[RMDB]
RNA sequence: GGGAACGACUCGAGUAGAGUCGAAAAGAGGGCUUGGCUGAUCUUAAUGAGGCCAGGUGCGACGCGGGGGCAACAGCCCGGCCUCAGCGAGGUCCCCUCGGGAGGUGCCUUCCGCGUCACGGAGUGCGAUACCUGUAUCGUUCGCGAUACAGGUAUCAAAAGAAACAACAACAACAAC
Reactivity to DMS in 0.01 (KOAc 150mM, MgCl2 10mM, bicine 150mM(pH8.5), 24C), signal-to-noise 3, nucleotides 027 to 126: g000a160g020g020g010c020u010u010g000g010c020u010g000a140u000c160u000u020a090a130u000g000a290g000g000c000c010a010g020g010u000g020c100g020a010c000g040c000g040g000g000g000g020c010a090a080c150a090g020c000c000c000g010g010c010c010u000c020a080g000c140g000a010g000g000u010c070c100c040c060u000c020g000g000g000a050g020g000u000g010c010c000u000u000c010c020g010c010g020u000c020a020c120g020g000a090g010u010g010c190
Reactivity to 2A3 in 0.01 (KOAc 150mM, MgCl2 10mM, bicine 150mM(pH8.5), 24C), signal-to-noise 1, nucleotides 027 to 126: g170a060g050g110g000c020u020u000g020g000c000u040g070a100u000c030u160u300a290a140u300g020a030g030g000c010c010a000g040g000u040g020c040g000a000c000g020c010g000g040g000g010g000c010a130a040c000a110g040c000c000c010g000g000c000c000u000c000a090g300c090g090a000g000g030u300c120c130c000c030u030c000g020g010g000a000g030g000u040g000c010c000u220u140c010c010g000c000g000u000c000a010c020g000g040a100g030u190g050c070